This 177-nucleotide RNA was probed chemically with 2A3. The reactions ran in a buffer of 150 mM KOAc, 10 mM MgCl2 and 150 mM bicine (pH 8.5), at 24 C. For 2A3 the reverse transcriptase was SuperScript II with manganese.
RNA sequence: GGGAACGACUCGAGUAGAGUCGAAAAUCGGAUCGUGACCCCAGCCCCGCCGGGCCGACCCGAAAUGAAAAGCUCUCCUCCUGCGAAGCCCCCUCGGGGCGCUGUGCAGCGAGGCCCCUUAGGCGGCGGGCAGCAUACCAUUCGUGGUAUGCUGCCCAAAAGAAACAACAACAACAAC
Reactivity to 2A3 in 0.01 (KOAc 150mM, MgCl2 10mM, bicine 150mM(pH8.5), 24C), signal-to-noise 2, nucleotides 027 to 126: u010c010g020g020a000u010c010g050u100g300a300c000c000c010c010a010g030c020c030c000c030g030c000c000g000g000g030c000c000g010a010c000c000c000g020a020a030a060u230g030a050a070a000a040g070c030u040c020u020c100c000u000c000c000u000g000c000g030a030a000g000c030c010c010c030c020u090c160g000g010g010g000c060g010c000u060g070u150g000c040a000g000c010g030a000g000g020c020c000c000c000u060u090a010g010g000c010g000g000c040